[RMDB]
RNA sequence: GGGAACGACUCGAGUAGAGUCGAAAAGAUCGAGCUUAGCCUCGUUCAUUUUUUUAUACAACAGCCCGUUAAAAACAGUAGACAGGCCGCUUUAGCUCUUAUUUAAGAUCGGUAAAAAACGGAAUAACUCCAUUUAUUCCUUCGGGAAUAAAUGGAGAAAAGAAACAACAACAACAAC
Reactivity to DMS in 0.01 (KOAc 150mM, MgCl2 10mM, bicine 150mM(pH8.5), 24C), signal-to-noise 1, nucleotides 027 to 126: g050a030u000c030g000a010g000c000u040u050a120g020c100c000u000c010g020u000u000c000a010u000u000u000u010u010u010u000a040u070a060c170a060a150c180a080g020c010c010c000g000u010u010a000a130a130a040a020c090a130g000u040a060g020a060c100a040g000g020c010c000g000c050u000u020u010a090g010c030u000c030u010u000a080u040u020u070a040a090g000a070u010c020g030g000u010a000a010a040a040a030a000c040g000g000a060a080u050a030a090
Reactivity to 2A3 in 0.01 (KOAc 150mM, MgCl2 10mM, bicine 150mM(pH8.5), 24C), signal-to-noise 2, nucleotides 027 to 126: g020a000u030c020g020a020g000c060u190u300a010g000c040c000u010c000g000u010u020c010a000u020u000u000u000u000u010u060a210u040a030c020a040a030c000a050g060c000c020c020g000u000u040a070a060a000a010a000c070a030g050u080a060g080a060c040a110g100g000c050c000g010c060u020u000u160a020g000c000u010c020u070u160a190u130u090u160a050a040g020a010u080c030g020g040u160a100a130a000a000a000a000c090g020g010a070a060u060a010a010
This 177-nucleotide RNA was probed chemically with DMS and 2A3. The reactions ran in a buffer of 150 mM KOAc, 10 mM MgCl2 and 150 mM bicine (pH 8.5), at 24 C. Source: RMDB library RFM100, as collected in RNAgym. The DMS profile rests on 1,458 reads. 2A3 adducts were read by reverse transcription with SuperScript II with manganese.